[RMDB]
RNA sequence: GGGAACGACUCGAGUAGAGUCGAAAAGACUGCGUGCACUCGAGACGAUAUCGAGCCGGAAAUUAAUCGAUAAUGUCUCUAGUAGUGGAUACGAUCCGGCAAGUAUCGACUACAUGUGCUCGUAGGACAGGUCCAUGGGUUUCGACCCAUGGACCUGAAAAGAAACAACAACAACAAC
Reactivity to 2A3 in 0.01 (KOAc 150mM, MgCl2 10mM, bicine 150mM(pH8.5), 24C), signal-to-noise 1, nucleotides 027 to 126: g000a010c000u020g000c000g000u000g000c000a000c000u000c080g000a000g000a000c000g000a000u000a000u000c000g000a020g000c000c030g020g130a040a180a200u300u240a130a230u210c000g000a000u030a020a090u120g030u000c000u000c040u040a020g040u000a000g000u000g090g000a000u000a000c000g030a030u000c000c000g000g000c060a060a000g000u000a000u010c040g060a000c000u000a000c000a060u000g010u000g000c000u000c000g000u000a000g000g040a000
About this RNA:
An RNA of 177 nucleotides, treated with 2A3 and read out base by base. The 2A3 profile rests on 740 reads. Values cover nucleotides 27 to 126. Values are in units of 0.01, from 0 to 300, in steps of 10. 2A3 is a SHAPE reagent: it acylates the 2'-hydroxyl of flexible nucleotides of all four kinds.